Chemical mapping of a 177-nucleotide RNA with 2A3 and DMS. The data come from the RNA Mapping Database (RMDB), library OK2TST.
[RMDB]
RNA sequence: GGGAACGACUCGAGUAGAGUCGAAAAUCAGGUGGGUCCACGGCCUGUUUGGAAGGAUCCGCAGAACCCGCUACGGCAUCACCCAGUGCUGCAACUGAAGGGCAUCCCAACCAUGAUGCGGUGGCAGCAUAUCCCACUCAUUCGUGAGUGGGAUAUGAAAAGAAACAACAACAACAAC
Reactivity to 2A3 in 0.01 (KOAc 150mM, MgCl2 10mM, bicine 150mM(pH8.5), 24C), signal-to-noise 9, nucleotides 027 to 126: u100c030a030g110g030u020g010g010g010u020c030c020a050c070g130g030c020c020u210g160u210u210u240g090g020a080a040g020g010a030u020c010c000g000c010a020g040a060a050c010c000c010g000c010u030a020c040g130g000c000a010u020c010a040c010c050c010a020g010u020g050c060u070g020c060a110a040c050u070g040a080a080g040g010g000c010a060u040c010c000c010a030a060c010c010a080u120g000a020u030g030c030g060g000u020g020g000c010a010g030
Reactivity to DMS in 0.01 (KOAc 150mM, MgCl2 10mM, bicine 150mM(pH8.5), 24C), signal-to-noise 9, nucleotides 027 to 126: u010c080a110g020g040u000g010g010g010u000c010c020a150c160g010g000c020c010u000g000u000u010u010g010g010a170a110g010g010a050u000c010c010g020c040a080g000a080a110c040c010c010g020c040u000a060c050g000g010c030a040u000c040a140c110c050c030a100g010u000g010c050u000g010c060a090a080c050u000g000a130a130g000g000g010c050a080u000c010c020c020a110a150c080c060a120u010g000a050u000g010c050g010g020u000g000g000c040a130g000
For DMS the reverse transcriptase was MarathonRT.